[RMDB]
RNA sequence: GGGAACGACUCGAGUAGAGUCGAAAACAAACAAACAAAACAACAAGUGCCGAAAUAAAAUCGCUGUAAGGGAUGACGGAAAGAAAACCAAGUCAUGCCAAAACGGCACAAAACAGCGAAAACAAAAAUUAGUGAUUAUGUUCGCAUAAUCACUAAUAAAAGAAACAACAACAACAAC
Reactivity to 2A3 in 0.01 (KOAc 150mM, MgCl2 10mM, bicine 150mM(pH8.5), 24C), signal-to-noise 6, nucleotides 027 to 126: c040a000a070a010c040a030a140a020c070a050a120a030a010c080a070a000c030a170a030g010u010g000c000c010g150a090a050a020u300a030a120a020a030u040c000g010c000u000g020u070a080a070g000g000g040a000u010g000a000c000g010g090a120a050a020g220a050a130a040a010c040c010a060a000g000u000c000a000u040g050c000c010a010a020a020a040c020g000g000c010a000c000a000a040a000a000c000a000g000c000g040a050a030a030a030c090a010a060a030a030
Reactivity to DMS in 0.01 (KOAc 150mM, MgCl2 10mM, bicine 150mM(pH8.5), 24C), signal-to-noise 4, nucleotides 027 to 126: c040a110a110a100c290a110a140a120c190a110a010a080a110c190a080a110c220a090a100g010u000g000c010c000g000a080a100a050u060a050a030a060a050u010c040g000c020u000g000u000a110a100g000g000g000a000u010g000a000c010g000g000a050a070a060g010a110a030a100a060c020c040a100a090g040u000c000a000u010g010c000c020a030a030a040a120c010g020g030c000a010c010a020a050a080a010c000a020g020c000g020a040a030a080a090c200a040a060a030a110
Background
The record gives the reactivity of an RNA of 177 nucleotides to 2A3 and DMS. For 2A3 the reverse transcriptase was SuperScript II with manganese. The DMS profile rests on 7,302 reads.